[RMDB]
RNA sequence: GGGAACGACUCGAGUAGAGUCGAAAAAAAGCAAUAUUAUGAGUUGAGGCUCGUAGCCAGUCAGCACUAAUAAUACGUGCAUCUUUUAGGUUAUCUUCAUGCUGAGACAAUACGACAUAGUCAGAGACAUAUCUUAGGUAUUCGUACCUAAGAUAUGAAAAGAAACAACAACAACAAC
Reactivity to DMS in 0.01 (KOAc 150mM, MgCl2 10mM, bicine 150mM(pH8.5), 24C), signal-to-noise 9, nucleotides 027 to 126: a050a050a060g000c040a070a070u000a040u000u000a040u000g000a100g010u000u000g010a180g010g000c040u000c210g020u010a080g010c070c030a100g020u000c080a080g010c040a040c060u000a210a050u000a040a050u010a040c170g010u000g010c020a080u000c040u000u000u010u010a080g020g000u000u000a060u010c050u000u000c070a050u000g010c040u000g010a150g000a060c070a050a060u000a060c100g010a080c090a060u000a070g010u000c060a070g000a120g010a180
Reactivity to 2A3 in 0.01 (KOAc 150mM, MgCl2 10mM, bicine 150mM(pH8.5), 24C), signal-to-noise 5, nucleotides 027 to 126: a000a000a000g130c120a130a040u140a070u180u070a050u130g060a030g060u040u040g040a030g050g000c020u040c130g090u080a020g020c020c020a030g100u060c050a010g000c020a010c040u040a030a100u080a150a030u070a070c130g010u020g020c010a050u070c070u040u140u060u160a070g040g020u060u050a060u090c040u110u060c050a050u130g020c020u030g010a010g010a050c000a030a030u100a080c090g040a020c040a060u090a030g040u050c030a020g020a000g010a160